[RMDB]
Chemical mapping of a 177-nucleotide RNA with DMS and 2A3. Source: RMDB library OK2TST, as collected in RNAgym. For DMS, 8,775 sequencing reads were counted. For DMS the reverse transcriptase was MarathonRT. Conditions: 150 mM KOAc, 10 mM MgCl2 and 150 mM bicine (pH 8.5), 24 C. The 2A3 profile rests on 6,461 reads.
RNA sequence: GGGAACGACUCGAGUAGAGUCGAAAAAUUCGCACAUGUCAGGAAGCACUCAAUAAUGUCAGUUGGGACUUGCGGGUAAGUGCUUAUGCCUUAGGUGUAAGUAAAAGGGAAGUAAUUUGGAAAAUUGCGCUACUAAUAUGUUCGCAUAUUAGUAGCGAAAAGAAACAACAACAACAAC
Reactivity to DMS in 0.01 (KOAc 150mM, MgCl2 10mM, bicine 150mM(pH8.5), 24C), signal-to-noise 6, nucleotides 027 to 126: a130u000u010c060g000c050a070c120a060u010g010u010c080a080g010g010a090a100g010c070a090c040u000c070a050a060u010a080a070u000g010u000c080a070g020u000u000g000g010g000a270c070u000u000g030c120g000g010g000u010a050a100g000u000g010c000u000u000a030u000g000c000c000u000u010a080g040g030u000g010u000a010a030g010u000a020a030a100a070g010g000g010a080a080g000u010a040a090u010u000u000g010g010a070a050a070a110u000u010g010
Reactivity to 2A3 in 0.01 (KOAc 150mM, MgCl2 10mM, bicine 150mM(pH8.5), 24C), signal-to-noise 5, nucleotides 027 to 126: a000u070u040c040g030c020a030c010a050u150g020u100c020a010g040g040a050a020g020c020a040c050u080c030a040a110u140a190a040u150g080u100c040a040g040u080u070g020g000g020a080c050u070u070g010c060g010g000g020u060a120a040g050u020g040c000u000u000a010u010g000c010c010u060u080a090g000g000u020g010u010a020a010g010u010a020a070a040a040g040g010g020a040a020g040u110a050a140u090u100u150g100g050a060a070a100a080u100u170g040